[RMDB]
RNA sequence: GGGAACGACUCGAGUAGAGUCGAAAAUGCCACAUUCGUGUGGCAGACUUGGGGUCCAAAGAUCCGAGGGACAUGAUCUGAAGCCUCCACGGAUCAACAGCCUACCCACCGGAUCAUUUGGACGGAGGCACCCGCAUAUUGACGGUUCGCCGUCAAAGAAUUCGCAAUACUUCGGUAUUGCGAAUUCAAAAGAAACAACAACAACAAC
Reactivity to 2A3 in 0.01 (KOAc 150mM, MgCl2 10mM, bicine 150mM(pH8.5), 24C), signal-to-noise 2, nucleotides 027 to 156: u030g000c020c000a000c000a010u060u070c260g090u110g020u030g000g020c020a010g050a000c060u110u140g100g050g030g020u000c000c000a000a040a020g000a000u110c060c060g030a300g050g000g060a030c070a140u110g000a000u000c000u020g030a080a010g030c000c010u010c000c000a000c030g000g000a000u010c000a010a060c040a040g050c000c090u130a130c100c020c110a160c120c040g050g000a010u020c100a290u000u050u010g040g000a010c000g000g010a000g000g000c000a030c000c010c000g050c050a070u180a090u190u050g010a000c020g010g000u040u030c120g060c130c000g010u020c000a050a000a000